[RMDB]
RNA sequence: GGGAACGACUCGAGUAGAGUCGAAAAGCGGACUUUUUCGAAAGUCCGCAUGGACUCAGAAGUGAAACGCCCUAGCGCCGAUGGUAGUGUGGGGUCUCCCCAGAUACCAACCCUUCGGGGUUGGUAAUCAUGACAAUUAAUUCGUUAAUUGUCAUGAAAAAGAAACAACAACAACAAC
Reactivity to DMS in 0.01 (KOAc 150mM, MgCl2 10mM, bicine 150mM(pH8.5), 24C), signal-to-noise 9, nucleotides 027 to 126: g010c000g010g000a020c000u000u000u000u000u020c140g010a030a010a010g010u000c000c000g020c010a000u000g010g010a080c020u000c020a090g010a150a110g010u010g000a080a090a110c140g000c060c010c010u000a220g010c040g010c020c030g000a100u010g020g020u000a040g030u000g010u000g010g010g010g010u000c060u000c030c000c000c120a140g010a210u000a010c000c000a000a010c000c000c000u000u010c200g030g000g010g010u000u000g000g010u000a000a030
Reactivity to 2A3 in 0.01 (KOAc 150mM, MgCl2 10mM, bicine 150mM(pH8.5), 24C), signal-to-noise 9, nucleotides 027 to 126: g000c000g000g010a000c010u030u040u030u060u150c210g090a040a000a000g000u000c000c000g010c000a000u020g040g010a020c010u010c050a070g040a230a020g130u100g100a120a090a040c060g020c010c000c000u030a040g030c010g020c040c040g180a150u200g070g060u080a220g010u040g060u140g060g020g000g010u000c030u030c000c000c010c000a020g020a100u050a020c000c000a000a000c020c000c010u030u060c250g030g000g000g000u010u000g000g000u000a000a010